[RMDB]
RNA sequence: GGGAACGACUCGAGUAGAGUCGAAAACAUGAAGUCGGACAUGAUCGCCAUGUUCAAGCGCCACCUGGUAGAAAACUCUUUCUUUCUAGACAAGGUGGAGAGCAUGCCCCGGGCCGGCCAAUACAUCGUGACCAUGUUGGCCGAGCUCAUGGCGGCGCGCUUUUACCUCUUUCGAGAGGUAAAAGCGAAAAGAAACAACAACAACAAC
Reactivity to 2A3 in 0.01 (KOAc 150mM, MgCl2 10mM, bicine 150mM(pH8.5), 24C), signal-to-noise 1, nucleotides 027 to 156: c040a040u160g100a130a010g160u190c100g000g030a020c000a020u070g080a200u210c110g090c120c000a010u000g000u040u020c140a100a030g000c010g000c020c000a000c010c000u000g020g000u000a020g030a030a070a040a070c050u060c040u200u190u100c080u090u000u040c000u030a050g020a260c040a120a020g000g000u000g000g000a050g010a000g000c010a050u150g020c030c000c000c010g010g020g000c000c000g000g040c000c000a010a000u080a070c060a050u090c190g280u150g090a110c030c020a050u110g000u030u020g020g010c010c010g000a100g000c010u070c010a060u060g010g080c120g030g020c020g070